Source information: The data come from the RNA Mapping Database (RMDB), library M2RFPK. Chemical mapping of a 207-nucleotide RNA with DMS and 2A3. The RNA was probed in 150 mM KOAc, 10 mM MgCl2 and 150 mM bicine (pH 8.5) at 24 C. For 2A3 the reverse transcriptase was SuperScript II with manganese.
[RMDB]
RNA sequence: GGGAACGACUCGAGUAGAGUCGAAAAGAAAGAAAGAAAUUAGCUCGCCAGUUAGCGAGGUCUAUCCCCACACGACAGAUAAUCGGGUGCAACUCCCGCCCCUUUUCCGAGGGUCAUCGGAACCAAAAAAACUCAGGCAACUUCGGUUGCCUGAGAACAUAGAUAAUAAGUUCGCUUAUUAUCUAUGAAAAGAAACAACAACAACAAC
Reactivity to DMS in 0.01 (KOAc 150mM, MgCl2 10mM, bicine 150mM(pH8.5), 24C), signal-to-noise 1, nucleotides 027 to 156: g010a100a140a070g000a160a080a100g000a100a080a110u000u000a170g020c000u000c000g020c000c010a190g010u000u000a070g000c040g000a040g000g040u010c010u030a130u010c000c050c000c180a080c120a130c080g000a010c020a010g010a130u000a080a110u000c040g020g000g040u010g000c110a150a300c050u000c040c020c010g000c040c020c000c030u040u000u020u000c010c000g000a040g030g000g060u000c090a080u000c010g000g030a020a000c150c020a000a000a090a110a050a110a140c000u030c000a030g000g000c000a010a010c000u000u000c300g030g020u000u000g040c040c000u010g000a000g040a020a080
Reactivity to 2A3 in 0.01 (KOAc 150mM, MgCl2 10mM, bicine 150mM(pH8.5), 24C), signal-to-noise 3, nucleotides 027 to 156: g040a000a080a010g100a040a120a000g040a040a170a030u110u060a070g030c010u000c010g030c030c030a220g140u180u240a010g030c000g010a000g000g020u010c010u010a070u040c000c000c070c000a030c010a000c030g120a020c020a070g130a120u130a090a060u200c000g010g000g000u010g000c000a000a010c040u020c000c000c000g010c010c000c000c000u110u100u040u020c000c000g000a000g010g020g030u080c020a010u000c000g000g000a000a000c010c010a020a050a060a050a020a040a030c000u000c000a000g020g000c010a000a000c000u060u110c190g090g000u010u010g000c010c000u000g000a000g000a000a000